RNA sequence: GGGAACGACUCGAGUAGAGUCGAAAAAUCGAUUAGCGCCGUAGCGCUAAUGCUAUACGGCAUCGCGAUGCCGUAAUUAAUGCCGUAUAGCAUUACGAUUAAUCGCGGCAUCGGCAUCGCGGCCGCGCAUCGACGUAACUUUCGAGUUACGUCGAUGAAAAGAAACAACAACAACAAC
Reactivity to DMS in 0.01 (KOAc 150mM, MgCl2 10mM, bicine 150mM(pH8.5), 24C), signal-to-noise 2, nucleotides 027 to 126: a060u000c010g000a160u000u000a020g010c000g070c030c300g000u010a090g000c000g000c000u000a000a020u020g000c030u000a020u000a020c000g000g020c000a050u000c030g010c010g000a020u000g000c000c000g020u010a020a030u000u010a120a030u000g010c020c010g020u000a010u010a010g020c010a100u000u000a020c090g000a060u000u000a060a070u000c020g000c000g000g010c020a060u020c020g000g000c010a000u000c010g000c010g000g000c000c000g010c020g000
Reactivity to 2A3 in 0.01 (KOAc 150mM, MgCl2 10mM, bicine 150mM(pH8.5), 24C), signal-to-noise 1, nucleotides 027 to 126: a000u030c030g010a030u070u030a010g010c000g010c140c180g220u140a090g000c000g000c020u010a010a010u010g020c010u010a010u000a020c000g000g000c000a030u090c020g000c000g000a000u010g000c020c020g180u130a070a060u120u160a070a010u050g000c010c000g000u050a000u030a020g000c000a000u030u040a000c010g020a010u120u120a050a130u090c040g000c000g020g000c000a030u040c060g000g000c000a000u000c000g010c040g050g000c000c000g000c000g000